RNA sequence: GGGAACGACUCGAGUAGAGUCGAAAAGAAAGAAAUCAAAGCGGAUUCUAGUCUAAUCGGAGAGACUAGCUCGAAUAACUCGUUCUUGAAAUAUCCGUAUUAGAUCUAACUGAGGGAUGAGUAGAAAGGGUUAGAUACUGUUCGCAGUAUCUAACCCAAAAGAAACAACAACAACAAC
Reactivity to DMS in 0.01 (KOAc 150mM, MgCl2 10mM, bicine 150mM(pH8.5), 24C), signal-to-noise 3, nucleotides 027 to 126: g000a170a130a100g000a080a050a050u000c010a020a120a300g000c030g000g020a020u000u000c020u000a000g000u000c000u000a020a080u030c140g040g010a200g020a040g010a020c000u000a020g000c080u010c120g040a050a060u010a080a090c150u020c120g000u000u000c000u000u000g010a060a060a060u040a050u010c000c010g000u030a080u030u020a190g000a000u000c040u010a100a120c080u000g000a030g030g020g000a040u000g000a000g010u000a080g000a100a100a100
Reactivity to 2A3 in 0.01 (KOAc 150mM, MgCl2 10mM, bicine 150mM(pH8.5), 24C), signal-to-noise 3, nucleotides 027 to 126: g100a030a050a000g090a020a140a000u070c090a030a040a050g050c020g010g010a000u070u000c000u000a000g000u000c000u050a100a060u150c120g160g010a090g000a000g010a060c000u000a000g000c010u020c030g070a080a080u110a140a060c070u050c050g070u070u000c020u020u080g030a050a020a030u140a010u010c000c000g000u010a020u010u040a030g010a020u020c050u060a020a050c010u170g000a110g050g010g030a050u040g020a030g070u100a040g070a090a090a000
This 177-nucleotide RNA was probed chemically with DMS and 2A3. For DMS, 2,853 sequencing reads were counted. DMS (dimethyl sulfate) methylates the pairing face of unpaired adenines and cytosines. The 2A3 profile rests on 1,964 reads. Values cover nucleotides 27 to 126. The reactions ran in a buffer of 150 mM KOAc, 10 mM MgCl2 and 150 mM bicine (pH 8.5), at 24 C.